[RMDB]
RNA sequence: GGGAACGACUCGAGUAGAGUCGAAAAUGCCUACUGCGUCAUGGCCCCCGAUGCCGUCCGCAUCGCGCGCGACGCGGGGCGGGAGGUGAAACGCCUCGACGACGGAAUGCUCGAAUGGCGAUUGGCCGCCACAACACAAUUUCGAUUGUGUUGUGGCAAAAGAAACAACAACAACAAC
Reactivity to DMS in 0.01 (KOAc 150mM, MgCl2 10mM, bicine 150mM(pH8.5), 24C), signal-to-noise 2, nucleotides 027 to 126: u090g000c020c000u020a110c060u010g000c040g020u000c020a090u010g000g000c020c030c070c040c060g020a040u050g030c010c070g000u020c050c060g000c000a010u000c000g000c080g000c120g050c230g000a150c020g010c000g000g000g000g010c020g000g000g000a020g000g000u000g010a090a090a070c090g040c020c000u000c050g000a040c060g000a070c040g000g010a100a060u030g040c090u000c060g000a120a050u000g000g000c020g000a200u010u030g000g010c090c090
Reactivity to 2A3 in 0.01 (KOAc 150mM, MgCl2 10mM, bicine 150mM(pH8.5), 24C), signal-to-noise 6, nucleotides 027 to 126: u080g030c000c000u020a070c020u110g040c000g040u040c010a040u050g090g000c000c010c000c000c050g030a030u150g010c010c050g070u020c000c040g000c010a050u020c040g020c020g000c020g030c110g120a160c030g010c020g000g010g000g000c030g010g040g010a020g000g000u060g070a200a160a010c080g020c000c010u000c030g050a070c040g000a010c020g020g120a140a100u160g030c030u040c090g060a120a110u160g030g000c030g110a220u010u160g090g030c020c020
The record gives the reactivity of an RNA of 177 nucleotides to DMS and 2A3. It was measured as part of the RMDB library OK1LIB. 2A3 adducts were read by reverse transcription with SuperScript II with manganese.